[RMDB]
RNA sequence: GGGAACGACUCGAGUAGAGUCGAAAAAUGGUGUGAAGAAACAUGAAUAUUUCUUACCUCAUGGAAAGUCACCAAGAAACAUGAUAAUGAAUUCCAUACUGUUACUGCAAUUCAGUCAAAUGAAUGACUCGUAUCCAAGUUUCGACUUGGAUACGAGAAAAGAAACAACAACAACAAC
Reactivity to 2A3 in 0.01 (KOAc 150mM, MgCl2 10mM, bicine 150mM(pH8.5), 24C), signal-to-noise 2, nucleotides 027 to 126: a000u050g040g020u050g020u040g130a090a030g100a120a100a000c020a010u100g130a160a030u170a160u100u110u040c040u040u050a050c020c000u050c010a010u030g020g070a180a060a000g130u050c020a020c060c020a010a020g130a060a080a040c070a060u130g080a040u120a220a090u300g000a100a090u070u000c030c000a010u070a160c050u060g060u150u030a010c020u070g090c030a050a080u070u010c010a040g020u030c000a070a080a130u150g050a060a020u060g040a070
Reactivity to DMS in 0.01 (KOAc 150mM, MgCl2 10mM, bicine 150mM(pH8.5), 24C), signal-to-noise 2, nucleotides 027 to 126: a070u000g030g020u010g000u040g010a050a050g010a070a080a170c080a040u030g010a120a060u000a170u000u010u000c040u030u000a080c130c100u000c070a060u000g010g000a140a090a130g000u000c060a060c070c050a010a090g000a060a100a080c060a030u000g010a140u030a110a060u010g050a060a150u040u010c040c020a060u000a060c100u000g000u020u000a030c020u040g000c110a090a070u000u000c020a010g040u000c240a030a060a120u000g000a050a010u010g020a170

This 177-nucleotide RNA was probed chemically with 2A3 and DMS.
The reactions ran in a buffer of 150 mM KOAc, 10 mM MgCl2 and 150 mM bicine (pH 8.5), at 24 C.
The DMS profile rests on 872 reads.